[RMDB]
Chemical mapping of a 177-nucleotide RNA with DMS and 2A3. DMS adducts were read by reverse transcription with MarathonRT. The reactions ran in a buffer of 150 mM KOAc, 10 mM MgCl2 and 150 mM bicine (pH 8.5), at 24 C. 2A3 is a SHAPE reagent: it acylates the 2'-hydroxyl of flexible nucleotides of all four kinds.

RNA sequence: GGGAACGACUCGAGUAGAGUCGAAAAUCUUGCAUCGGGUUGGCUCAUCCUGAGACCGGGGAGCUUCGACGAUCUCUUGUCUCUCCUGAAGGAGGAAGGAGCUCUCGAACGCUCUCCCGACCGCUCGGCAUAAAACACUGUUCGCAGUGUUUUAUGCAAAAGAAACAACAACAACAAC
Reactivity to DMS in 0.01 (KOAc 150mM, MgCl2 10mM, bicine 150mM(pH8.5), 24C), signal-to-noise 2, nucleotides 027 to 126: u010c060u000u000g000c090a140u010c050g000g020g010u010u000g030g000c040u000c030a080u000c070c010u000g020a070g010a170c240c050g020g010g030g010a020g000c020u000u000c000g010a020c220g010a020u000c000u020c000u000u000g010u000c030u020c020u000c000c000u000g020a170a200g020g000a010g030g010a110a020g000g000a020g000c150u000c020u000c010g000a000a030c230g010c010u000c020u010c000c000c000g010a250c110c160g000c020u000c000g000
Reactivity to 2A3 in 0.01 (KOAc 150mM, MgCl2 10mM, bicine 150mM(pH8.5), 24C), signal-to-noise 2, nucleotides 027 to 126: u010c010u020u080g060c050a130u010c000g060g000g000u040u110g060g010c030u030c050a090u080c020c060u050g040a020g010a020c020c030g000g010g000g010a000g000c000u000u000c010g010a030c090g000a010u000c000u000c000u020u100g220u140c010u030c000u030c130c020u150g210a300a180g010g000a010g000g000a010a010g000g010a010g000c000u000c010u010c000g000a010a010c050g020c000u010c070u040c000c010c000g010a010c000c010g020c020u010c030g070